Record summary:
The record gives the reactivity of an RNA of 177 nucleotides to DMS and 2A3. The RNA was probed in 150 mM KOAc, 10 mM MgCl2 and 150 mM bicine (pH 8.5) at 24 C.

RNA sequence: GGGAACGACUCGAGUAGAGUCGAAAAGCUUACUAUACGCGAGGGAGGUUCAAUUGACACUUUCCGCUACGGCGAUUCUUCAGAAACUGUGUCAUCUUUUUUCCAGGUCGAGCUGUAGGAAAACCUGAUUGCGUAGUGGAUUCGUCCACUACGCAAUAAAAGAAACAACAACAACAAC
Reactivity to DMS in 0.01 (KOAc 150mM, MgCl2 10mM, bicine 150mM(pH8.5), 24C), signal-to-noise 3, nucleotides 027 to 126: g000c080u000u010a060c070u000a110u010a040c070g010c050g000a100g010g000g010a080g010g010u000u010c080a130a160u010u010g010a020c050a030c020u000u010u010c040c050g030c030u020a090c120g000g020c030g000a100u000u010c080u000u010c070a100g000a090a080a070c190u000g010u000g010u000c030a080u000c010u000u000u000u000u000u000c050c020a080g010g010u010c040g010a110g030c060u000g000u010a070g010g000a050a060a110a110c050c010u000g000
Reactivity to 2A3 in 0.01 (KOAc 150mM, MgCl2 10mM, bicine 150mM(pH8.5), 24C), signal-to-noise 2, nucleotides 027 to 126: g000c010u020u050a000c020u070a050u030a140c070g010c040g050a080g050g040g010a040g020g000u050u090c040a110a160u150u130g000a010c020a000c000u030u050u020c040c010g000c000u040a030c070g070g000c000g030a070u220u020c020u140u080c050a050g060a040a090a050c050u060g010u010g080u040c010a090u090c020u070u130u070u040u020u040c020c000a030g000g050u030c000g000a020g010c030u020g060u030a050g040g020a040a030a040a050c020c010u030g050

Overview:
Reactivities are given for positions 27 through 126. The 2A3 profile rests on 1,635 reads.